[RMDB]
RNA sequence: GGGAACGACUCGAGUAGAGUCGAAAAAGCUUUUAGCAGCAGGGCACAUCCCAGACCCCUACACUGCCUGCAUUAAAAGCUAAACACCAAAAAUAGUGCUGUCAAUAGGAAGGUAGGAGUUUGGUCAAAAUAUUCACAUCAGGAACAGCAAUGGUGAGUAUCCCCUCCUAUUCGUAGGAGGGGAUACAAAAGAAACAACAACAACAAC
Reactivity to 2A3 in 0.01 (KOAc 150mM, MgCl2 10mM, bicine 150mM(pH8.5), 24C), signal-to-noise 2, nucleotides 027 to 156: a010g000c010u020u070u020u020a010g000c030a000g000c000a000g010g030g000c080a030c040a210u070c000c030c020a030g050a120c000c000c000c070u000a020c100a020c090u080g020c000c010u000g000c000a050u070u030a020a010a020a000g020c060u060a020a090a000c060a030c030c050a100a000a020a000a070u080a100g060u020g000c030u030g070u080c010a000a100u010a120g090g000a060a000g040g000u020a000g010g080a040g050u060u070u020g020g030u050c020a000a000a000a100u210a070u060u170c070a020c020a090u110c020a010g170g050a130a010c000a020g100c000a010a040u130g010g030u040g010a050
Reactivity to DMS in 0.01 (KOAc 150mM, MgCl2 10mM, bicine 150mM(pH8.5), 24C), signal-to-noise 1, nucleotides 027 to 156: a120g030c040u000u000u000u010a030g050c040a100g040c030a050g020g000g000c040a220c110a140u000c020c030c110a170g030a080c000c000c050c030u000a100c030a070c030u020g070c030c060u010g120c010a200u000u000a040a100a100a000g020c020u000a090a060a100c010a230c050c030a020a080a120a160a100u000a080g020u000g050c000u020g000u000c020a130a190u000a100g000g010a150a030g010g010u000a030g030g000a050g070u000u000u010g020g030u010c070a040a050a010a090u000a050u000u000c060a030c020a130u000c050a070g000g020a020a060c020a030g000c080a010a190u000g050g000u000g020a140
Annotation:
An RNA of 207 nucleotides, treated with 2A3 and DMS and read out base by base. The DMS profile rests on 1,500 reads. The RNA was probed in 150 mM KOAc, 10 mM MgCl2 and 150 mM bicine (pH 8.5) at 24 C. The data come from the RNA Mapping Database (RMDB), library OK3TST. 2A3 adducts were read by reverse transcription with SuperScript II with manganese.